RNA sequence: GGGAACGACUCGAGUAGAGUCGAAAAGAACGCCACUUCGGUGGCGUUCGAAGAUCUACCACACGUAGAUCACUAUCGUGUGAGACUUCGAUAGAUGUCAAAUGGUCCGGAAGUUCGCUUCCGGAAAUAACUCUGAGUAUUUCGAUACUCAGAGUUAAAAAGAAACAACAACAACAAC
Reactivity to 2A3 in 0.01 (KOAc 150mM, MgCl2 10mM, bicine 150mM(pH8.5), 24C), signal-to-noise 5, nucleotides 027 to 126: g010a000a000c000g000c000c000a000c000u040u080c190g100g000u000g000g000c010g000u000u010c000g000a000a000g000a050u000c010u030a050c010c070a080c020a010c130g010u020a000g010a090u120c040a040c080u060a040u070c040g000u020g010u040g070a130g040a080c050u060u020c060g020a020u040a100g100a060u080g070u120c040a050a090a150u170g150g030u000c000c000g010g000a000a010g010u050u140c210g040c100u010u000c010c010g000g000a000a000a010
Reactivity to DMS in 0.01 (KOAc 150mM, MgCl2 10mM, bicine 150mM(pH8.5), 24C), signal-to-noise 8, nucleotides 027 to 126: g000a030a010c010g010c000c000a010c010u000u010c170g020g020u000g000g020c000g010u000u000c000g010a070a060g010a060u000c010u000a070c110c070a090c150a070c080g010u000a010g000a130u010c210a180c050u000a020u000c020g010u000g010u000g010a160g000a070c070u000u000c020g000a070u000a060g010a100u000g010u000c100a060a070a120u010g010g010u000c000c000g010g000a020a010g010u000u010c210g000c010u000u000c000c000g010g000a000a020a050